Source: RMDB library OK3TST, as collected in RNAgym. This 207-nucleotide RNA was probed chemically with DMS and 2A3. For DMS the reverse transcriptase was MarathonRT.
RNA sequence: GGGAACGACUCGAGUAGAGUCGAAAAUACUUGUGUGCCAGUGUUCAUUGCAGGAUUAUUCACUGUAGCCAAAAGGUAGAAACAACCUAGGUGUCCAUCAGUGGAUGAAUGGAUAAACAAGAUAUGGUCUAUACAUGUGGUGGAAUAUUAUCCAGCCUACCUAUGAUUUGUUCGCAAAUCAUAGGUAAAAAGAAACAACAACAACAAC
Reactivity to DMS in 0.01 (KOAc 150mM, MgCl2 10mM, bicine 150mM(pH8.5), 24C), signal-to-noise 4, nucleotides 027 to 156: u000a060c040u000u010g020u010g030u000g000c020c030a110g020u010g030u000u000c050a110u000u000g030c040a100g000g000a160u010u000a070u010u000c030a040c020u020g020u000a150g030c020c030a060a070a120a060g020g020u000a060g020a190a110a160c070a080a050c020c000u000a160g010g020u000g020u000c030c020a270u000c020a070g020u010g020g010a050u000g000a070a080u000g000g000a050u000a030a080a080c040a070a110g000a140u000a050u000g020g010u000c030u000a080u010a060c040a060u010g010u000g010g010u000g020g010a080a080u000a050u010u000a100u000c010c010a090g020c090c070
Reactivity to 2A3 in 0.01 (KOAc 150mM, MgCl2 10mM, bicine 150mM(pH8.5), 24C), signal-to-noise 7, nucleotides 027 to 156: u140a020c040u060u050g010u010g020u040g060c000c020a060g020u030g050u110u070c060a070u070u100g070c040a020g030g060a070u080u120a030u090u110c010a020c020u010g020u050a050g010c010c010a030a160a070a040g010g010u030a040g150a150a090a030c060a010a000c020c010u020a030g010g010u040g040u070c070c020a070u050c010a040g030u020g020g030a020u020g050a050a050u040g010g020a030u050a080a080a010c040a060a020g040a060u070a070u100g030g000u000c040u080a070u050a060c030a030u100g020u030g040g030u030g020g030a040a020u100a090u240u060a030u060c010c010a020g050c030c010